[RMDB]
RNA sequence: GGGAACGACUCGAGUAGAGUCGAAAAGUCAGUGGGCUUAGCCCAGACUUAUGAGAGAAGUGGUUACCUCUCAGCCCCUCCACCUUGGGGUGCCCUAUCCGAGCACUGCUGUUUCGGUAGAAAGGCUCAGUAAGAGAUGGUUCGCCAUCUCUUACUGAAAAGAAACAACAACAACAAC
Reactivity to 2A3 in 0.01 (KOAc 150mM, MgCl2 10mM, bicine 150mM(pH8.5), 24C), signal-to-noise 2, nucleotides 027 to 126: g000u030c130a100g170u100g040g010g000c070u220u140a100g000c000c000c010a000g000a010c000u040u060a040u070g000a010g000a000g000a150a020g060u060g160g090u170u110a050c010c000u000c000u010c000a020g020c020c010c000c000u010c030c040a210c010c040u070u090g010g000g000g060u040g020c000c010c000u020a030u000c000c010g000a020g040c010a040c150u170g070c040u020g140u110u300u120c040g040g000u020a020g080a050a060a000g080g000c020u000
Reactivity to DMS in 0.01 (KOAc 150mM, MgCl2 10mM, bicine 150mM(pH8.5), 24C), signal-to-noise 2, nucleotides 027 to 126: g000u000c000a180g000u010g040g000g000c020u020u010a160g020c000c000c010a070g020a010c010u010u000a090u000g000a010g010a010g000a110a080g010u000g010g020u000u000a130c160c000u010c010u000c000a070g010c020c000c010c010u000c090c060a120c140c110u000u010g010g010g000g010u010g010c010c000c010u010a070u010c040c020g000a020g020c080a050c200u000g020c100u000g010u000u010u000c030g010g000u000a050g010a030a120a110g010g020c060u000